[RMDB]
RNA sequence: GGGAACGACUCGAGUAGAGUCGAAAAUGAUUAUCGUGUGACCUUCGUCGACCCGUAUACAGCUUAUGGGGCCGGAUUCGUUCAGGCGCAUUGUGAGUUGAUGCCGUUUGAUGGAGGAACUCCGGUACUCCCAUAUACCUUUCGAGGUAUAUGGGAGAAAAGAAACAACAACAACAAC
Reactivity to DMS in 0.01 (KOAc 150mM, MgCl2 10mM, bicine 150mM(pH8.5), 24C), signal-to-noise 5, nucleotides 027 to 126: u010g000a150u010u000a020u000c030g010u010g010u010g000a270c010c010u000u000c030g020u000c010g010a040c030c030c220g000u000a040u000a110c040a050g030c040u000u000a040u000g010g010g010g010c010c000g010g010a040u000u010c180g010u000u000c010a060g020g000c020g010c030a060u010u000g020u010g000a060g000u000u000g010a060u000g010c020c150g010u000u000u000g010a030u010g010g010a030g000g010a140a130c090u000c060c000g000g000u000a080
Reactivity to 2A3 in 0.01 (KOAc 150mM, MgCl2 10mM, bicine 150mM(pH8.5), 24C), signal-to-noise 5, nucleotides 027 to 126: u170g030a050u090u080a010u090c030g010u030g050u040g290a150c010c000u010u010c010g010u000c010g000a030c000c030c000g000u010a030u020a040c020a010g020c010u050u020a030u070g020g000g080g020c010c000g000g010a010u030u070c150g030u080u010c020a060g020g000c050g010c170a090u050u120g030u030g040a040g000u010u050g020a020u010g010c010c010g000u000u010u070g020a020u020g000g010a010g010g000a040a040c030u020c020c010g010g010u030a080